Structure probing data (2A3 and DMS) for a 170-nucleotide construct. The DMS profile rests on 8,098 reads. DMS adducts were read by reverse transcription with MarathonRT. Reactivities are given for positions 27 through 129. Source: RMDB library 15KLIB, as collected in RNAgym. The RNA was probed in 150 mM KOAc, 10 mM MgCl2 and 150 mM bicine (pH 8.5) at 24 C. 2A3 adducts were read by reverse transcription with SuperScript II with manganese.
[RMDB]
RNA sequence: GGGAACGACUCGAGUAGAGUCGAAAAAGCACCUCGUGCCUCUUAUGCAUAAGGGGGCUGCGUGGCCUAUUGUUAGACGACGUAUAGUGCAAAUGUUGUCAGACACUUUAGACAAAUUGUCUGAUUAAAGCCUCUGCGUUCGCGCAGAGGAAAAGAAACAACAACAACAAC
Reactivity to 2A3 in 0.01 (KOAc 150mM, MgCl2 10mM, bicine 150mM(pH8.5), 24C), signal-to-noise 4, nucleotides 027 to 129: a010g040c030a030c010c010u140c040g040u070g070c000c000u080c010u050u130a050u200g050c000a150u010a150a020g110g000g000g020g000c030u000g000c000g000u030g040g030c000c000u100a160u130u210g110u040u100a060g040a060c040g000a000c020g030u030a000u100a090g080u080g000c000a020a010a100u270g030u170u070g020u000c020a020g000a000c000a000c000u050u080u060a130g000a150c060a090a080a020u000u000g000u000c000u000g000a000u050u250a040a010a010g030
Reactivity to DMS in 0.01 (KOAc 150mM, MgCl2 10mM, bicine 150mM(pH8.5), 24C), signal-to-noise 4, nucleotides 027 to 129: a030g020c140a160c030c010u040c080g010u060g010c010c070u040c090u010u010a050u050g040c190a150u020a080a020g070g000g000g000g060c070u040g000c040g000u030g000g080c090c000u000a150u020u040g020u070u010a060g040a130c010g060a050c000g020u010a060u030a040g020u090g000c000a040a120a190u000g130u030u050g000u010c010a000g020a060c050a030c160u000u040u070a010g090a160c290a050a040a050u010u030g020u040c010u050g020a040u040u080a020a040a040g040